This 177-nucleotide RNA was probed chemically with DMS. The reactions ran in a buffer of 150 mM KOAc, 10 mM MgCl2 and 150 mM bicine (pH 8.5), at 24 C. The data come from the RNA Mapping Database (RMDB), library RFM100. For DMS the reverse transcriptase was MarathonRT.

RNA sequence: GGGAACGACUCGAGUAGAGUCGAAAAGAACAUUUUAGUAAUCUGGAACGGUGAUAAAAUGGGGCUCCCUCUUGGAUUAUUUCCGUGGAGGUUUUAGAGGAACCAUUGUUGAAGAUACUUGGCAACUUAACGUCUUUUCUUUCGAGAAAAGACGUUAAAAAGAAACAACAACAACAAC
Reactivity to DMS in 0.01 (KOAc 150mM, MgCl2 10mM, bicine 150mM(pH8.5), 24C), signal-to-noise 1, nucleotides 027 to 126: g010a180a210c040a040u000u010u000u020a080g000u010a160a010u000c030u000g000g090a100a070c070g010g030u000g000a140u000a040a010a010a000u000g040g000g010g000c050u000c060c020c020u000c020u000u040g010g010a000u000u070a080u020u020u000c000c000g000u010g040g010a060g000g020u070u000u010u020a040g020a090g000g000a040a150c000c000a090u010u010g000u000u000g000a090a040g020a030u030a040c070u010u010g000g010c120a060a030c200u000